[RMDB]
RNA sequence: GGGAACGACUCGAGUAGAGUCGAAAACUUGCAGCAACAUGGUUGGAGCUGGAGGCCAUUAUCCUAAGCAAAUUAACACAGGAACAGACAACCAAAUACCAGCCAGGCAUGGUGGCUCAUGCCUGUAAUCCCAACACUUUGGGAUGCCGAGGCAGGACAUGCGUGGAUACUUCGGUAUCCACGCAUGAAAAGAAACAACAACAACAAC
Reactivity to 2A3 in 0.01 (KOAc 150mM, MgCl2 10mM, bicine 150mM(pH8.5), 24C), signal-to-noise 1, nucleotides 027 to 156: c030u000u100g010c000a000g020c020a030a080c020a070u050g000g060u040u110g000g010a030g000c010u050g020g010a060g120g000c000c030a060u120u090a090u060c000c020u060a030a030g000c070a090a080a150u230u100a110a030c060a000c010a210g000g000a020a010c000a100g090a040c050a060a000c070c000a120a000a000u110a090c010c000a010g000c000c000a000g030g000c000a000u030g030g030u040g040g000c010u010c170a000u020g000c000c000u000g000u000a000a010u010c030c000c000a020a080c130a100c260u170u100u000g040g000g000a010u030g050c000c000g060a050g070g000c070a000g050g000a020
This 207-nucleotide RNA was probed chemically with 2A3. Reactivities are given for positions 27 through 156. The reactions ran in a buffer of 150 mM KOAc, 10 mM MgCl2 and 150 mM bicine (pH 8.5), at 24 C. For 2A3, 658 sequencing reads were counted.